[RMDB]
Background
The record gives the reactivity of an RNA of 177 nucleotides to 2A3 and DMS. DMS adducts were read by reverse transcription with MarathonRT. It was measured as part of the RMDB library OK2TRN.
RNA sequence: GGGAACGACUCGAGUAGAGUCGAAAAUUGUUAAUCAUCUUCAUAACUAUGUUUUCACGCGCAUGUUUGUAUACAAGUAUAUACAUACGUAUUACAUACAUAUGUAAAACAUACAUGCAUAAUGAGCCAUGAAAAUCCAUUUCGAUGGAUUUUCAUGAAAAGAAACAACAACAACAAC
Reactivity to 2A3 in 0.01 (KOAc 150mM, MgCl2 10mM, bicine 150mM(pH8.5), 24C), signal-to-noise 5, nucleotides 027 to 126: u070u040g040u050u050a090a070u080c050a030u020c060u170u060c030a070u080a190a080c060u110a070u150g040u040u060u050u050c090a050c050g060c000g000c020a010u000g030u010u010u030g020u020a060u020a050c040a070a040g030u020a070u010a030u000a120c060a060u100a070c040g020u010a020u040u110a050c050a030u050a020c000a020u100a060u120g010u030a020a050a050a020c000a000u020a010c020a020u020g030c010a010u080a190a060u100g030a010g050c020
Reactivity to DMS in 0.01 (KOAc 150mM, MgCl2 10mM, bicine 150mM(pH8.5), 24C), signal-to-noise 6, nucleotides 027 to 126: u000u010g010u010u000a090a140u000c090a070u010c100u000u000c060a080u010a090a100c110u000a060u000g010u000u010u000u000c050a030c110g010c260g010c050a010u000g010u000u000u000g010u000a100u010a070c130a070a140g010u010a050u010a100u000a050c050a050u000a020c080g010u010a030u000u010a050c100a300u000a020c020a030u000a080u000g000u000a020a060a080a030c020a010u000a010c060a020u000g000c050a020u000a090a020u000g000a050g010c220